This 207-nucleotide RNA was probed chemically with 2A3. Reactivities are given for positions 27 through 156.
RNA sequence: GGGAACGACUCGAGUAGAGUCGAAAAGCCUGAAGGUUCGCCUUCAGGCAAAACCUUUGUGAGGUGUGUAGAGCUUGGAUUUAGGCUUCCCAUUGGGAAGCCUUGUCAGCUCCACAUUAUCCUCACUCUGGUAAACGCUACGAAUUCGUUCGUAGCGCAAGUCUUCCGGUUUCGACCGGAAGACUUGAAAAGAAACAACAACAACAAC
Reactivity to 2A3 in 0.01 (KOAc 150mM, MgCl2 10mM, bicine 150mM(pH8.5), 24C), signal-to-noise 1, nucleotides 027 to 156: g000c060c080u050g020a000a050g030g030u160u150c240g120c040c010u000u000c000a060g010g000c030a000a000a000a000c010c000u020u070u000g000u000g000a000g000g010u000g000u000g050u050a030g000a010g030c020u060u080g230g010a090u300u260u090a020g000g000c000u000u000c010c020c120a300u130u190g000g000g010a010a000g000c010c010u050u010g000u000c000a010g000c000u000c000c000a030c010a000u230u240a030u110c000c000u000c000a000c000u000c000u010g020g010u020a080a080a020c020g030c000u000a000c000g000a010a020u040u050c180g080u130u000c000g010u070a000g000c000g000